[RMDB]
Notes: The record gives the reactivity of an RNA of 177 nucleotides to 2A3 and DMS. The reactions ran in a buffer of 150 mM KOAc, 10 mM MgCl2 and 150 mM bicine (pH 8.5), at 24 C. For 2A3, 3,415 sequencing reads were counted. 2A3 adducts were read by reverse transcription with SuperScript II with manganese. For DMS the reverse transcriptase was MarathonRT.
RNA sequence: GGGAACGACUCGAGUAGAGUCGAAAAAGAGAGAGAGUACAGCCUUAGUUCAGAUCACAUAUGACUAUCUUUUGCGAGUCUGAUCGAUACUCUGAUGAAGGCUGUACCCUCUCUCUUCUUCUCUUAGCUACUAAGGUAACUUCGGUUACCUUAGUAGAAAAGAAACAACAACAACAAC
Reactivity to 2A3 in 0.01 (KOAc 150mM, MgCl2 10mM, bicine 150mM(pH8.5), 24C), signal-to-noise 3, nucleotides 027 to 126: a000g010a000g000a010g000a010g000a010g010u010a000c000a010g010c000c000u120u050a080g090u100u030c020a010g000a030u050c050a010c010a090u170a070u170g010a000c010u060a070u240c080u040u270u230u300g080c140g010a010g000u000c000u060g050a060u080c020g010a010u040a140c040u020c020u030g000a010u060g020a030a020g000g000c000u000g010u000a000c000c000c000u020c010u000c000u000c000u000u000c000u000u000c000u000c000u000u020a010g000
Reactivity to DMS in 0.01 (KOAc 150mM, MgCl2 10mM, bicine 150mM(pH8.5), 24C), signal-to-noise 5, nucleotides 027 to 126: a020g000a000g000a010g000a020g020a030g010u000a010c000a010g020c000c000u000u000a100g010u000u000c020a020g000a040u010c090a090c200a090u010a080u000g010a050c060u000a100u000c040u000u010u020u020g030c150g010a030g000u000c010u010g000a090u000c150g010a110u010a080c240u000c050u000g010a030u040g010a030a020g000g010c000u000g010u000a000c000c010c010u000c000u000c000u000c000u000u000c050u000u000c050u000c010u000u000a120g010